[RMDB]
RNA sequence: GGGAACGACUCGAGUAGAGUCGAAAACUAAGAAAAGCGUAACAGCUUACCGGCCGAGGUUCGGGGCGCCCAAAAUGAUCGGGGCUCAAAUCCACCACCGAGACCUGGCCGCACCCCUCACAGGGUGCCUAGCUACUGGCUUCGGCCAGUAGCUAGGAAAAGAAACAACAACAACAAC
Reactivity to DMS in 0.01 (KOAc 150mM, MgCl2 10mM, bicine 150mM(pH8.5), 24C), signal-to-noise 2, nucleotides 027 to 126: c060u000a040a040g000a080a040a000a000g000c000g030u020a130a100c180a160g000c000u000u000a110c010c010g000g010c000c000g010a040g000g050u040u010c020g020g050g000g030c200g000c000c000c000a060a050a190a080u060g000a100u050c230g000g000g000g000c050u010c140a060a030a060u020c080c070a200c060c040a090c010c010g000a040g010a030c010c000u010g000g000c020c030g000c000a040c000c000c010c060u010c250a110c240a270g030g010g030u000g010
Reactivity to 2A3 in 0.01 (KOAc 150mM, MgCl2 10mM, bicine 150mM(pH8.5), 24C), signal-to-noise 4, nucleotides 027 to 126: c020u080a090a020g120a080a120a020a000g000c000g030u060a040a040c030a050g010c010u010u040a050c010c020g000g010c010c020g240a050g000g000u010u010c000g000g010g010g010c040g060c000c000c030a070a110a020a100u300g080a100u170c120g010g010g010g000c020u040c110a080a090a040u090c050c030a040c030c020a090c000c000g010a030g070a070c000c010u000g000g000c000c010g000c000a010c000c000c000c010u100c020a050c040a020g010g010g000u020g020
The data come from the RNA Mapping Database (RMDB), library RFM100. An RNA of 177 nucleotides, treated with DMS and 2A3 and read out base by base.